[RMDB]
RNA sequence: GGGAACGACUCGAGUAGAGUCGAAAACAUUCCGAGGGGACCGUCCCCUCGGUAAUGGCGAAUGGGACCCACAAACCUCUCUAGAUUCCGAUAGAGAAUCGAGAGGAAAGUGGCUCUCCCUUAGCCACACUGUAAUCAACUUCGGUUGAUUACAGUGAAAAGAAACAACAACAACAAC
Reactivity to 2A3 in 0.01 (KOAc 150mM, MgCl2 10mM, bicine 150mM(pH8.5), 24C), signal-to-noise 3, nucleotides 027 to 126: c020a050u090u040c000c000g000a000g020g000g020g000a060c040c050g300u250c020c000c000c000u000c000g000g000u000a010a040u030g000g000c010g000a020a030u040g000g010g010a010c010c060c000a010c010a000a200a040c000c000u020c010u020c020u100a090g000a000u010u000c030c040g150a260u130a200g240a040g000a050a000u000c010g000a000g000a000g000g000a040a010a000g010u010g000g000c010u000c000u000c000c000c000u000u000a000g000c000c010a000
Reactivity to DMS in 0.01 (KOAc 150mM, MgCl2 10mM, bicine 150mM(pH8.5), 24C), signal-to-noise 3, nucleotides 027 to 126: c080a200u010u000c010c000g010a000g010g000g000g020a260c270c280g000u030c000c000c000c000u000c000g000g010u000a000a060u010g020g010c030g000a200a040u000g000g000g010a040c250c000c000a020c020a030a120a250c000c000u000c000u000c010u000a220g000a020u000u000c000c000g000a230u040a090g020a130g040a000a000u000c000g010a010g000a020g010g000a000a000a150g000u000g000g000c040u010c060u000c000c000c010u000u000a240g000c000c020a130
Structure probing data (2A3 and DMS) for a 177-nucleotide construct. Values are in units of 0.01, from 0 to 300, in steps of 10. Source: RMDB library 15KREP, as collected in RNAgym. The 2A3 profile rests on 4,382 reads.